An RNA of 207 nucleotides, treated with 2A3 and read out base by base.
RNA sequence: GGGAACGACUCGAGUAGAGUCGAAAAACCUUUGUGGUGUAGUAGUAGAUAUUGUCAGCUCUGGGUGGGUCCCAUUGGGACCCACAUAGAGCUUGGAUUUAUAUCGAAACUACACCACUCUGGUAAACUUGCUCUCUCGUUCGCGAGAGAGCAAGAACAGCAUAUAGCGUUUCGACGCUAUAUGCUGAAAAGAAACAACAACAACAAC
Reactivity to 2A3 in 0.01 (KOAc 150mM, MgCl2 10mM, bicine 150mM(pH8.5), 24C), signal-to-noise 1, nucleotides 027 to 156: a000c000c000u020u010u000g000u000g000g020u000g000u000a000g000u000a010g020u000a020g020a010u000a010u000u000g010u000c010a010g000c000u000c000u050g030g000g000u020g010g020g000u000c060c030c060a150u290u300g020g000g000a020c000c070c060a000c000a030u030a000g010a010g000c010u000u030g000g000a000u070u300u230a030u000a000u000c000g020a020a000a000c000u010a000c000a000c000c000a000c000u000c000u020g010g000u020a170a020a040c000u000u000g000c000u000c000u000c000u010c030g030u080u060c270g010c010g040a010g000a000g010a000g000c000a000a000g010a010a000
Values cover nucleotides 27 to 156.
Conditions: 150 mM KOAc, 10 mM MgCl2 and 150 mM bicine (pH 8.5), 24 C.